[RMDB]
RNA sequence: GGGAACGACUCGAGUAGAGUCGAAAAGGUUGAGGCCUGGCUUCUCAUAAAGCAUAGAAUGAGACAACUGAUAUCUGAGCUCAGACAAAUGCCGGCAAUGUGUGAAAUAACAAUCCUUGACACGAGAGUAUUUCCGAUGCUUCGGCAUCGGAAAUACAAAAGAAACAACAACAACAAC
Reactivity to 2A3 in 0.01 (KOAc 150mM, MgCl2 10mM, bicine 150mM(pH8.5), 24C), signal-to-noise 1, nucleotides 027 to 126: g080g000u060u040g040a000g080g080c000c000u000g000g030c000u020u010c000u000c000a020u030a020a220a090g050c000a040u080a080g130a060a080u040g000a000g090a020c000a060a110c150u190g100a040u020a080u260c120u130g000a000g030c090u090c110a090g040a080c020a000a010a030u110g000c000c000g000g000c000a100a100u180g060u030g000u050g120a180a050a000u220a010a000c000a040a030u100c000c000u000u010g040a000c000a000c020g100a090g000a020
Reactivity to DMS in 0.01 (KOAc 150mM, MgCl2 10mM, bicine 150mM(pH8.5), 24C), signal-to-noise 1, nucleotides 027 to 126: g010g000u000u000g000a060g000g000c110c050u010g010g050c070u000u000c000u070c000a010u050a150a150a120g010c020a020u080a120g000a140a090u000g010a090g050a100c300a070a040c100u020g000a070u020a100u010c070u000g000a150g000c020u070c000a000g000a150c070a030a100a020u000g010c000c090g000g030c000a090a160u000g010u030g000u000g000a040a110a160u050a000a050c160a030a020u000c000c050u000u000g010a110c160a000c160g000a120g000a180